[RMDB]
RNA sequence: GGGAACGACUCGAGUAGAGUCGAAAAUUUGUAAACAAUUUGGAGACUCAGUCAGACAUUUUAUCCGCCAAUCCGAAAUUGGCACAAAGUAAAUUCAUGUCUCUUCUUAGAGGCUUAGGUGACGAAGAGAUUGUAGUCAAAGAAGGGCAAGAGGUAAGUUUAAGAUAAUAUUCGUAUUAUCUUAAACAAAAGAAACAACAACAACAAC
Reactivity to DMS in 0.01 (KOAc 150mM, MgCl2 10mM, bicine 150mM(pH8.5), 24C), signal-to-noise 2, nucleotides 027 to 156: u000u000u000g040u020a130a070a130c030a080a140u000u000u010g000g020a300g000a100c020u010c030a160g030u020c030a060g000a100c030a090u000u000u000u000a070u000c080c100g000c030c000a020a010u000c090c200g000a040a300a150u000u010g000g030c020a110c060a080a040a150g010u000a050a010a120u010u010c070a060u010g010u010c010u030c000u010u000c080u000u000a100g000a060g030g010c020u010u010a040g010g030u010g010a100c070g000a090a060g020a110g000a000u000u000g020u000a070g040u020c080a010a050a050g010a080a030g010g050g010c020a010a140g000a060g020g040u000a030a210
Reactivity to 2A3 in 0.01 (KOAc 150mM, MgCl2 10mM, bicine 150mM(pH8.5), 24C), signal-to-noise 4, nucleotides 027 to 156: u040u030u080g080u090a070a070a050c030a070a090u070u060u070g050g010a030g000a010c010u000c050a020g050u040c030a010g040a060c020a030u060u090u080u060a070u080c060c030g000c010c000a020a010u060c060c020g170a120a110a080u030u000g010g000c050a010c040a010a120a000g080u150a030a100a100u170u120c050a040u080g010u000c010u000c000u120u010c010u040u110a050g030a020g110g010c000u060u100a040g040g040u050g020a020c030g030a050a040g010a000g020a040u030u090g070u080a050g020u030c040a050a020a050g030a010a030g020g010g000c040a040a030g030a010g060g030u080a060a110